[RMDB]
RNA sequence: GGGAACGACUCGAGUAGAGUCGAAAAUCACUAAAGGUUGCCAGUACGCCCUGAAUAAAAGCGCCGUUUUUUUCUGCAUAGGGACGAGCUGCCAGAUAAAACGAUCCAGUUUGAUUGAGAUCGGUGCACCGUAUAUCGUGUUCGCACGAUAUACGGUAAAAGAAACAACAACAACAAC
Reactivity to DMS in 0.01 (KOAc 150mM, MgCl2 10mM, bicine 150mM(pH8.5), 24C), signal-to-noise 4, nucleotides 027 to 126: u010c030a140c090u030a080a070a100g000g020u020u000g030c090c040a090g010u010a120c100g000c000c000c000u010g020a070a070u040a070a080a100a140g010c050g010c010c020g000u000u000u000u000u000u000u000c030u020g010c100a120u020a080g010g000g020a060c050g000a180g000c050u000g010c040c010a100g000a120u010a040a030a070a100c040g000a040u000c020c030a070g020u010u020u020g000a070u020u000g000a080g010a020u000c000g010g020u010g000c100
Reactivity to 2A3 in 0.01 (KOAc 150mM, MgCl2 10mM, bicine 150mM(pH8.5), 24C), signal-to-noise 5, nucleotides 027 to 126: u060c020a030c060u180a150a020a000g100g000u060u070g040c020c000a040g030u070a050c060g000c000c010c020u030g060a100a040u170a160a070a020a010g060c060g000c040c040g020u010u000u020u000u030u030u090c030u020g030c010a040u080a100g060g020g050a070c040g010a050g020c020u000g010c050c000a030g030a100u170a090a090a020a020c000g000a010u010c000c020a010g040u060u220u230g210a180u030u140g020a090g000a120u020c040g020g010u050g010c020
The record gives the reactivity of an RNA of 177 nucleotides to DMS and 2A3. It was measured as part of the RMDB library OK1LIB. Reactivities are given for positions 27 through 126. The reactions ran in a buffer of 150 mM KOAc, 10 mM MgCl2 and 150 mM bicine (pH 8.5), at 24 C. For DMS the reverse transcriptase was MarathonRT.